[RMDB]
RNA sequence: GGGAACGACUCGAGUAGAGUCGAAAACAUGCCGUGCUUAGCUGUUCUGUGCCAUGCAUGGCCAUACCAUGGCUUGCCAUGCCAUGCCAUAUAGAGCUGUGCCGUGAUGUACGAUGCCCAGCCGCACAAACGAACGCAGAUUCGUCUGCGUUCGUUUAAAAGAAACAACAACAACAAC
Reactivity to DMS in 0.01 (KOAc 150mM, MgCl2 10mM, bicine 150mM(pH8.5), 24C), signal-to-noise 2, nucleotides 027 to 126: c090a080u020g000c040c030g020u010g000c010u010u000a080g010c000u000g000u000u000c190u000g030u000g000c140c030a020u000g020c000a010u000g010g020c040c160a060u000a140c240c080a060u010g020g050c070u000u000g000c150c140a080u010g000c050c010a010u000g020c140c060a060u020a060u010a100g010a120g020c010u000g010u000g000c010c040g020u000g010a110u000g000u010a040c090g000a150u020g000c000c010c020a130g000c040c090g000c200a030c170
Reactivity to 2A3 in 0.01 (KOAc 150mM, MgCl2 10mM, bicine 150mM(pH8.5), 24C), signal-to-noise 2, nucleotides 027 to 126: c020a000u120g000c010c000g010u030g000c000u100u060a000g000c040u050g060u300u030c020u090g180u120g000c000c000a010u020g000c000a020u000g000g030c050c000a050u110a060c030c080a050u030g050g000c020u030u060g130c040c020a120u120g020c090c010a020u020g010c040c010a050u160a030u090a120g090a000g010c000u010g000u020g010c070c010g000u030g030a190u130g090u030a010c020g060a070u110g010c050c020c000a030g050c020c040g000c000a100c010